[RMDB]
RNA sequence: GGGAACGACUCGAGUAGAGUCGAAAAAAAAAAAGAUAUGGACGAUUGAAAGCUCGACGAUCAAUCGUAACAUCAAAUCGGAAACGAUUUGUGGAUUGGGAGAGCUGAUCGUCCUAAGUCAAAAAAACUUAUAUCAAGGGUUCGCCCUUGAUAUAAGAAAAGAAACAACAACAACAAC
Reactivity to 2A3 in 0.01 (KOAc 150mM, MgCl2 10mM, bicine 150mM(pH8.5), 24C), signal-to-noise 1, nucleotides 027 to 126: a000a000a000a000a110a000a030g020a030u040a000u040g000g020a000c020g000a020u040u300g300a300a170a060g030c000u100c010g290a300c020g030a080u000c010a000a000u000c030g000u060a050a030c030a090u260c000a000a000a020u020c000g010g000a000a000a000c000g000a000u000u070u000g040u060g080g010a000u010u030g000g030g000a020g010a000g010c010u010g000a000u000c010g000u000c000c000u000a010a000g000u020c040a040a000a060a030a000a030a200
Reactivity to DMS in 0.01 (KOAc 150mM, MgCl2 10mM, bicine 150mM(pH8.5), 24C), signal-to-noise 2, nucleotides 027 to 126: a000a000a030a060a060a120a090g020a000u000a000u000g000g000a000c000g010a030u000u000g000a110a090a030g010c000u000c010g000a080c300g000a010u010c000a000a010u010c000g020u000a060a050c180a050u010c010a000a000a010u000c000g010g010a020a020a030c000g010a010u000u000u000g010u010g000g000a010u000u000g000g010g010a000g020a000g000c010u000g000a010u000c000g020u000c010c000u000a000a050g000u010c000a000a000a050a080a080a090a150
An RNA of 177 nucleotides, treated with 2A3 and DMS and read out base by base. The data come from the RNA Mapping Database (RMDB), library TTRDES. In probing experiments dimethyl sulfate is read out at A N1 and C N3, which are open when not base-paired. DMS adducts were read by reverse transcription with MarathonRT. For DMS, 3,276 sequencing reads were counted. The RNA was probed in 150 mM KOAc, 10 mM MgCl2 and 150 mM bicine (pH 8.5) at 24 C. The 2A3 profile rests on 2,260 reads.